Structure probing data (2A3 and DMS) for a 177-nucleotide construct. It was measured as part of the RMDB library TTRDEL. The RNA was probed in 150 mM KOAc, 10 mM MgCl2 and 150 mM bicine (pH 8.5) at 24 C. The 2A3 profile rests on 10,822 reads.

[RMDB]
RNA sequence: GGGAACGACUCGAGUAGAGUCGAAAAGAUAUGGAAUGUGGAGUACGCUUCACAGCGUUGAAAUCGGAAACGAUGGAGCUGUAGAGUGAAACACAUUCCUAAGUCAAAAGCGUUCUUCGGAACGCAACCAUAAUUCCACGUUCGCGUGGAAUUAUGGAAAAGAAACAACAACAACAAC
Reactivity to 2A3 in 0.01 (KOAc 150mM, MgCl2 10mM, bicine 150mM(pH8.5), 24C), signal-to-noise 3, nucleotides 027 to 126: g030a030u050a030u140g000g010a000a000u010g000u000g010g010a000g020u020a030c200g010c010u100u140c050a000c000a020g020c010g170u300u070g030a020a010a000u010c000g030g020a090a040a030c010g000a000u020g020g040a010g000c010u010g010u030a050g020a020g030u110g020a010a010a000c010a000c000a000u000u000c000c000u000a060a010g040u000c020a040a020a100a070g000c010g030u000u000c000u040u050c190g100g010a010a000c010g000c010a000a000
Reactivity to DMS in 0.01 (KOAc 150mM, MgCl2 10mM, bicine 150mM(pH8.5), 24C), signal-to-noise 3, nucleotides 027 to 126: g000a030u000a300u010g010g010a000a010u000g010u010g020g000a080g000u010a100c220g010c000u000u020c060a000c000a020g000c010g020u000u000g000a120a100a020u000c010g000g000a140a110a140c000g020a010u010g010g020a080g000c000u000g000u010a020g000a020g000u000g010a170a170a080c000a010c010a010u000u000c000c000u000a000a050g000u000c070a060a060a070a100g010c000g020u000u000c000u000u010c190g010g000a000a000c000g030c000a020a080